Chemical mapping of a 207-nucleotide RNA with 2A3. For 2A3, 441 sequencing reads were counted.

RNA sequence: GGGAACGACUCGAGUAGAGUCGAAAAUGUCACUACUCCGAACUUUGCUUUAAUCAAGUCACUGUGAAGUGAGUUUGCUAUCUGCAGGUAAAAGCUUGAAGGUGUUGACACUAAGAGCUAAGCUAGAGAUUGAACAAUACUUCAAAUGAAGUCCUCAGUCGUAAAUGACGUUCGCGUCAUUUACGACAAAAGAAACAACAACAACAAC
Reactivity to 2A3 in 0.01 (KOAc 150mM, MgCl2 10mM, bicine 150mM(pH8.5), 24C), signal-to-noise 1, nucleotides 027 to 156: u100g010u020c020a010c100u170a080c020u000c000c060g100a130a040c010u020u050u110g030c010u020u060u160a060a040u080c040a050a090g010u050c030a000c090u010g010u070g100a060a060g030u070g120a040g010u060u050u030g070c000u030a050u110c070u070g000c030a070g000g010u030a000a110a110a030g040c000u020u120g110a220a170g030g000u000g010u160u250g090a010c000a040c100u050a040a000g000a010g000c000u000a030a030g030c000u040a010g000a000g000a110u050u050g020a010a000c010a040a000u040a190c040u030u050c000a050a030a300u290g010a020a000g000u000c000c010u080c070a030